Structure probing data (2A3 and DMS) for a 177-nucleotide construct. 2A3 is a SHAPE reagent: it acylates the 2'-hydroxyl of flexible nucleotides of all four kinds. 2A3 adducts were read by reverse transcription with SuperScript II with manganese. The reactions ran in a buffer of 150 mM KOAc, 10 mM MgCl2 and 150 mM bicine (pH 8.5), at 24 C.

RNA sequence: GGGAACGACUCGAGUAGAGUCGAAAAAGUUGUGCGUCUCCAACUGGUCUCCUAGUAACUUUUUAUAGACAUCGCAGUCUAGUGUAGGUUUCGUCCUAUGGAGUACCCUCCUAUAUUCAGUAGAUAGAGCUGUGAGAUUAUUCGUAAUCUCACAGCUAAAAGAAACAACAACAACAAC
Reactivity to 2A3 in 0.01 (KOAc 150mM, MgCl2 10mM, bicine 150mM(pH8.5), 24C), signal-to-noise 4, nucleotides 027 to 126: a010g050u050u030g050u050g040c050g080u010c000u000c010c030a070a100c000u010g000g040u040c030u080c000c000u000a040g070u070a020a030c030u060u070u010u130u150a110u110a070g020a000c030a050u080c210g060c190a070g010u000c010u030a030g050u020g060u150a050g040g000u020u130u110c060g010u070c020c010u040a090u110g020g000a000g000u050a050c020c000c000u020c010c020u030a050u060a050u160u200c110a090g080u060a030g070a130u080a030g120
Reactivity to DMS in 0.01 (KOAc 150mM, MgCl2 10mM, bicine 150mM(pH8.5), 24C), signal-to-noise 4, nucleotides 027 to 126: a070g010u000u000g000u010g010c100g010u020c020u000c040c020a030a070c070u000g000g000u000c020u010c010c030u010a060g020u010a070a070c060u010u010u010u060u030a060u010a060g010a040c030a080u020c260g020c070a180g010u000c010u020a040g000u030g030u020a060g010g000u020u010u010c060g000u010c060c020u010a050u010g020g010a050g010u030a110c100c030c060u000c010c000u000a090u020a050u010u010c110a090g010u000a040g020a090u010a100g000